[RMDB]
RNA sequence: GGGAACGACUCGAGUAGAGUCGAAAAAAUCCCUCAAUAUGGGAUCAGGUUCAGAGACUAAACGGAGAUCGAUCUAGGCAUUGAACUAGGUUUAAGAUAUAGUCCAUUAUUCUGCUUAACAGCAAUUGAAUGUAUUAAUUGGGAGCCUGCGGCUUAACCUAACUUAGAGCUUCGGCUCUAAGUUAGGAAAAGAAACAACAACAACAAC
Reactivity to 2A3 in 0.01 (KOAc 150mM, MgCl2 10mM, bicine 150mM(pH8.5), 24C), signal-to-noise 3, nucleotides 027 to 156: a000a000u050c030c020c000u070c090a160a110u130a100u200g040g000g000a040u020c010a000g000g000u030u030c040a020g050a030g000a160c050u030a060a130a040c050g140g010a040g010a060u090c060g000a000u000c010u000a000g020g060c090a180u110u300g090a100a010c000u010a030g010g000u000u020u140a080a020g030a010u050a010u030a130g020u000c020c020a010u060u030a010u080u050c010u030g020c000u060u040a020a100c010a040g020c000a010a110u080u110g060a050a020u040g020u110a080u180u150a240a180u120u090g030g070g020a000g010c010c010u050g050c060g070g000c020u030u000a010a040
Reactivity to DMS in 0.01 (KOAc 150mM, MgCl2 10mM, bicine 150mM(pH8.5), 24C), signal-to-noise 1, nucleotides 027 to 156: a030a020u000c000c000c010u000c060a240a150u010a110u000g010g000g000a030u010c020a080g010g020u000u000c010a090g000a150g050a030c010u000a050a040a120c090g050g030a230g010a150u000c050g010a020u000c030u000a030g000g010c000a190u000u020g010a050a050c020u010a070g040g000u000u010u000a030a080g010a120u000a100u000a010g000u000c030c030a080u000u010a070u000u020c110u010g000c040u000u000a070a130c080a120g050c050a040a120u000u000g000a030a030u000g010u010a090u010u000a040a090u010u000g000g000g000a130g010c090c010u010g030c040g020g030c000u000u000a030a290